[RMDB]
RNA sequence: GGGAACGACUCGAGUAGAGUCGAAAAGAUAUGGAUGAUGACCUAACGCCUCAACAGCGAGCUCGGAAACGAGCUCGACAUGAGGAUGUUAGCAAGUCCUAAGUCAAAAGCGACGUUCGCGUCGCAACACUGAUCUAGCCUUCGGGCUAGAUCAGUGAAAAGAAACAACAACAACAAC
Reactivity to DMS in 0.01 (KOAc 150mM, MgCl2 10mM, bicine 150mM(pH8.5), 24C), signal-to-noise 1, nucleotides 027 to 126: g030a050u010a300u000g000g000a000u000g030a090u000g000a100c300c000u000a000a040c000g000c000c000u000c030a020a080c240a260g000c030g000a000g010c000u000c000g010g000a080a100a160c000g000a000g030c000u000c000g030a030c060a170u020g000a010g000g000a060u020g000u000u000a000g000c050a080a100g020u010c000c000u000a010a110g000u020c040a110a060a100a060g000c000g000a010c020g000u000u010c220g020c010g020u000c000g010c030a050a100
Reactivity to 2A3 in 0.01 (KOAc 150mM, MgCl2 10mM, bicine 150mM(pH8.5), 24C), signal-to-noise 1, nucleotides 027 to 126: g040a030u070a010u220g050g000a020u040g080a140u150g080a110c040c000u000a000a000c010g020c040c000u020c040a070a150c000a090g100c050g030a000g000c010u030c000g010g040a060a140a120c000g000a010g010c000u010c010g020a030c000a030u040g020a000g000g000a150u080g010u000u000a010g000c000a040a300g020u000c000c000u080a100a030g090u100c010a020a090a090a110g000c000g010a000c010g020u060u060c300g000c000g060u020c000g000c020a050a020
Background: An RNA of 177 nucleotides, treated with DMS and 2A3 and read out base by base. For 2A3 the reverse transcriptase was SuperScript II with manganese. It was measured as part of the RMDB library TTRDEL. Reactivities are given for positions 27 through 126. The DMS profile rests on 756 reads.